[RMDB]
RNA sequence: GGGAACGACUCGAGUAGAGUCGAAAAAUUUGCUGCUCUAGUCUGUCAGUGAUAGGAGCGGUUAUACGCAUGGGAUAAAACAAUAUUGGGCCACUGUACAUGGAGAUGAAAUGUGUUUUGUCUCUCGGAAACGUCUGAGAUUCGUCUCAGACGUUUCAAAAGAAACAACAACAACAAC
Reactivity to 2A3 in 0.01 (KOAc 150mM, MgCl2 10mM, bicine 150mM(pH8.5), 24C), signal-to-noise 4, nucleotides 027 to 126: a000u090u070u090g020c010u000g010c010u000c000u020a100g010u020c000u060g290u110c100a080g100u050g130a020u070a100g070g000a000g000c010g000g010u120u060a130u050a090c110g050c040a070u150g000g000g020a020u050a030a060a000a010c040a080a020u040a070u190u110g040g080g000c020c010a020c030u030g050u160a050c020a120u100g050g000a050g020a030u150g090a030a070a030u140g020u000g010u020u000u000u020g000u000c010u000c000u000c060g010
Reactivity to DMS in 0.01 (KOAc 150mM, MgCl2 10mM, bicine 150mM(pH8.5), 24C), signal-to-noise 2, nucleotides 027 to 126: a080u020u000u030g000c000u010g010c000u000c030u010a300g000u020c010u000g030u090c250a120g010u020g020a020u030a180g000g020a010g030c040g020g000u000u010a050u050a110c100g000c150a080u000g000g000g000a040u000a010a050a020a060c010a010a040u010a110u000u000g000g020g000c020c020a030c070u000g000u030a050c200a200u010g000g010a070g000a140u010g000a020a060a020u010g000u000g000u000u000u000u000g000u010c010u000c000u020c240g000
This 177-nucleotide RNA was probed chemically with 2A3 and DMS. High DMS reactivity at an A or C suggests that its Watson-Crick edge is free. The RNA was probed in 150 mM KOAc, 10 mM MgCl2 and 150 mM bicine (pH 8.5) at 24 C.